[RMDB]
RNA sequence: GGGAACGACUCGAGUAGAGUCGAAAAUAGGCUUGGCACUGGCUUUAAGUUCCAAACACUGGUUAGAAACUGCCUGGAAUGCCAAAGGAAAUACAGCAUUCCCUAGCUGAAGAGUAUUUUAACACUCGACGUGAUGUGUAUUCGUACACAUCACGUCAAAAGAAACAACAACAACAAC
Reactivity to 2A3 in 0.01 (KOAc 150mM, MgCl2 10mM, bicine 150mM(pH8.5), 24C), signal-to-noise 2, nucleotides 027 to 126: u080a030g130g000c050u020u020g030g000c060a030c020u020g050g000c000u110u080u060a100a030g040u120u000c030c000a000a120a000c130a050c100u100g030g010u020u020a000g030a060a190a010c010u000g030c000c040u020g080g080a220a060u030g020c000c010a040a010a030g080g040a070a030a020u170a030c030a010g000c010a000u060u000c000c000c000u020a020g000c010u020g060a230a000g020a070g010u050a120u010u230u020u130a080a020c100a010c050u020c030
Reactivity to DMS in 0.01 (KOAc 150mM, MgCl2 10mM, bicine 150mM(pH8.5), 24C), signal-to-noise 2, nucleotides 027 to 126: u000a080g010g030c070u010u010g010g000c010a090c080u000g020g010c040u000u000u000a070a080g010u000u000c010c020a040a050a040c140a140c180u000g020g010u020u010a040g010a030a060a030c080u000g000c030c000u010g030g040a090a070u000g020c010c030a010a060a060g000g010a080a030a060u010a120c070a090g000c010a090u000u000c010c010c070u000a040g020c010u000g000a120a110g010a050g020u000a030u020u000u010u000a100a130c220a050c070u000c060